[RMDB]
Source information:
The data come from the RNA Mapping Database (RMDB), library M2PK50. An RNA of 177 nucleotides, treated with 2A3 and DMS and read out base by base.
RNA sequence: GGGAACGACUCGAGUAGAGUCGAAAAUAUGGGCAGUUCGCUGCCCAUACGAGCGGAGUCCGGCACAAUGAGCCCGCAGCGUUGGUGCGUAGCCGCGGUGCAGAGACCAAGCCUUCGGGCUUGGUAACAUAUGGAAUUAGUUCGCUAAUUCCAUAUGAAAAGAAACAACAACAACAAC
Reactivity to 2A3 in 0.01 (KOAc 150mM, MgCl2 10mM, bicine 150mM(pH8.5), 24C), signal-to-noise 8, nucleotides 027 to 126: u070a010u010g010g010g000c000a010g010u040u080c150g060c120u000g000c000c000c000a000u000a000c000g010a010g030c030g020g030a050g060u010c040c000g030g020c030a010c030a070a160u160g020a030g040c000c010c020g000c020a020g050c020g050u110u270g050g020u080g020c060g070u110a010g000c020c000g010c020g020g020u060g000c030a030g050a010g000a110c000c000a000a000g010c000c010u040u080c200g090g000g000c000u000u000g000g000u010a000a000
Reactivity to DMS in 0.01 (KOAc 150mM, MgCl2 10mM, bicine 150mM(pH8.5), 24C), signal-to-noise 9, nucleotides 027 to 126: u000a000u000g000g000g020c000a010g010u000u010c220g020c000u000g010c000c000c000a000u000a000c060g010a100g010c040g010g000a110g010u000c020c020g010g010c040a060c090a070a070u000g000a130g020c030c030c030g020c040a050g000c030g010u000u010g040g010u000g010c120g010u010a170g010c020c020g010c050g010g010u000g020c050a110g010a130g000a040c000c000a000a000g000c000c000u000u010c210g030g010g010c000u000u000g000g010u000a010a070
Source information: DMS adducts were read by reverse transcription with MarathonRT.